[RMDB]
RNA sequence: GGGAACGACUCGAGUAGAGUCGAAAAGGAAGCUAUGGACUCUGGUGACACCUCACCACAAGUUCUUAAGGCUUUGCAGAAGGCUGUUAAUAUAGCUAAAAACGCCUAUGAGAAGGAUAAGGCAGUGCAUUAUAAAGGUCUUCGGACCUUUAUAAUGAAAAGAAACAACAACAACAAC
Reactivity to DMS in 0.01 (KOAc 150mM, MgCl2 10mM, bicine 150mM(pH8.5), 24C), signal-to-noise 7, nucleotides 027 to 126: g010g010a060a030g010c010u010a080u010g000g000a010c010u010c300u000g000g020u000g000a070c240a140c300c230u000c010a010c010c010a020c290a060a050g010u000u000c010u000u010a120a130g000g010c010u000u000u000g010c150a100g010a070a080g000g010c010u010g010u000u010a070a100u000a090u000a040g000c020u000a030a080a070a090a050c140g020c010c000u000a070u010g000a120g010a120a100g000g000a080u000a050a080g000g020c040a080g020u000g000
Reactivity to 2A3 in 0.01 (KOAc 150mM, MgCl2 10mM, bicine 150mM(pH8.5), 24C), signal-to-noise 3, nucleotides 027 to 126: g070g020a010a010g000c030u030a060u180g010g010a000c010u010c020u020g030g000u000g040a050c010a070c060c060u040c000a000c000c010a020c030a010a020g010u010u020c000u060u060a150a110g020g000c010u020u000u030g050c020a020g040a150a010g040g000c020u030g030u080u010a160a030u140a080u090a140g000c030u080a070a010a040a010a030c070g010c000c000u040a050u120g060a090g070a180a030g070g000a030u060a090a030g020g000c040a020g050u030g110